[RMDB]
RNA sequence: GGGAACGACUCGAGUAGAGUCGAAAAGGUCCGCUGUUCGCAGCGGACCAAAUAAAAUCAGCGGUAUCGAGGCCUAAAAUAUUACCGCUGAACGCCUCGAUAAAACCGUGCCGUUCGCGGCACGGAACACAGUGGAUUUGUUCGCAAAUCCACUGUGAAAAGAAACAACAACAACAAC
Reactivity to 2A3 in 0.01 (KOAc 150mM, MgCl2 10mM, bicine 150mM(pH8.5), 24C), signal-to-noise 2, nucleotides 027 to 126: g030g010u000c000c020g000c020u000g010u020u070c240g010c100a000g020c000g000g000a010c000c000a010a000a010u010a000a010a000a050u070c010a010g010c010g010g030u010a020u050c050g040a060g110g100c070c090u130a100a090a050a010u300a150u100u050a010c010c000g020c000u000g000a010a000c020g030c000c000u030c030g040a060u100a160a080a010a030c000c000g000u000g000c010c010g000u020u030c250g000c020g060g000c020a000c010g000g010a010a000
Reactivity to DMS in 0.01 (KOAc 150mM, MgCl2 10mM, bicine 150mM(pH8.5), 24C), signal-to-noise 2, nucleotides 027 to 126: g050g020u000c000c020g010c000u000g050u010u000c250g020c000a040g030c000g050g000a010c000c010a000a040a040u010a040a050a160a130u000c020a030g050c040g010g010u010a010u010c110g000a030g020g010c010c090u000a080a040a050a110u010a160u000u000a010c000c030g000c000u000g000a020a020c190g010c010c000u000c090g000a120u000a030a080a140a060c050c010g010u000g020c000c000g060u000u020c270g040c030g030g000c000a010c000g000g000a040a090
About this RNA
Structure probing data (2A3 and DMS) for a 177-nucleotide construct. Source: RMDB library M2PK50, as collected in RNAgym. 2A3 adducts were read by reverse transcription with SuperScript II with manganese. In probing experiments dimethyl sulfate is read out at A N1 and C N3, which are open when not base-paired. The DMS profile rests on 1,227 reads.